[RMDB]
RNA sequence: GGGAACGACUCGAGUAGAGUCGAAAAGCAGGCCGGGGUGAUCACGUAGUAGUGCUGAAUGACCCGAGCAUCGGGCGAUCAGAUGCUGAAGCUUUGCAGUUGCUGAGUAAUGUCGGCCAACGUCACCUAGUCGUAAAUAUUUCGAUAUUUACGACUAAAAAGAAACAACAACAACAAC
Reactivity to DMS in 0.01 (KOAc 150mM, MgCl2 10mM, bicine 150mM(pH8.5), 24C), signal-to-noise 9, nucleotides 027 to 126: g010c050a080g000g000c020c020g010g000g010g010u010g000a090u010c060a070c110g010u030a090g020u030a070g010u010g010c050u010g010a050a110u010g000a150c010c010c020g000a130g030c200a070u010c010g020g010g010c090g010a080u010c030a040g000a060u020g010c010u000g000a140a100g010c030u010u010u020g020c070a090g000u000u010g000c020u010g000a080g010u010a100a080u030g000u010c000g000g010c030c040a060a060c080g000u010c080a080c030c040
Reactivity to 2A3 in 0.01 (KOAc 150mM, MgCl2 10mM, bicine 150mM(pH8.5), 24C), signal-to-noise 9, nucleotides 027 to 126: g070c070a040g020g010c010c020g030g010g010g010u040g050a100u060c030a010c100g040u060a040g050u040a020g040u080g070c020u010g050a070a070u150g130a220c000c000c020g030a050g030c040a100u140c010g010g010g010c030g030a050u040c030a020g060a080u070g000c010u030g040a080a040g020c000u090u110u150g030c040a060g020u120u110g010c020u020g010a010g030u080a060a040u100g180u200c000g000g000c020c020a040a030c030g060u060c020a080c060c000

The record gives the reactivity of an RNA of 177 nucleotides to DMS and 2A3.
Source: RMDB library OK1LIB, as collected in RNAgym.
The RNA was probed in 150 mM KOAc, 10 mM MgCl2 and 150 mM bicine (pH 8.5) at 24 C.
For DMS the reverse transcriptase was MarathonRT.
For DMS, 51,039 sequencing reads were counted.